[RMDB]
This 207-nucleotide RNA was probed chemically with 2A3.
Values cover nucleotides 27 to 156.
High 2A3 reactivity points to a flexible backbone, as in loops and unpaired stretches.
The reactions ran in a buffer of 150 mM KOAc, 10 mM MgCl2 and 150 mM bicine (pH 8.5), at 24 C.
The 2A3 profile rests on 4,231 reads.
RNA sequence: GGGAACGACUCGAGUAGAGUCGAAAACGCCAAGAGCUCGUCUCUGUCAGCCUCGGGUGCACGUGGGCCCGCGGUCGAGCCCUAAGGCCGGGCGUGGGGCUGGGGUCGCAGGGAGAGUAACCGUGAGCCGGCGCCCAGCCUUCAGGGCGCUCCCUCGGAAAUAAUUAUUCUUCGGAAUAAUUAUUUCAAAAGAAACAACAACAACAAC
Reactivity to 2A3 in 0.01 (KOAc 150mM, MgCl2 10mM, bicine 150mM(pH8.5), 24C), signal-to-noise 3, nucleotides 027 to 156: c060g030c020c010a110a050g010a010g020c080u080c270g210u130c110u010c010u030g060u060c040a010g010c010c000u010c010g010g020g000u080g070c100a060c220g100u170g030g120g000c000c010c000g010c020g000g020u080c060g020a010g000c000c000c000u000a010a000g000g010c010c000g010g000g010c010g000u060g030g300g010g000c010u040g030g010g000g080u050c050g020c120a130g030g070g050a050g020a010g020u030a030a040c010c010g130u070g090a000g010c010c000g010g010c000g000c000c000c000a000g000c000c000u010u020c060a000g000g000g010c000g000c010u010c000c000c000u020c050g030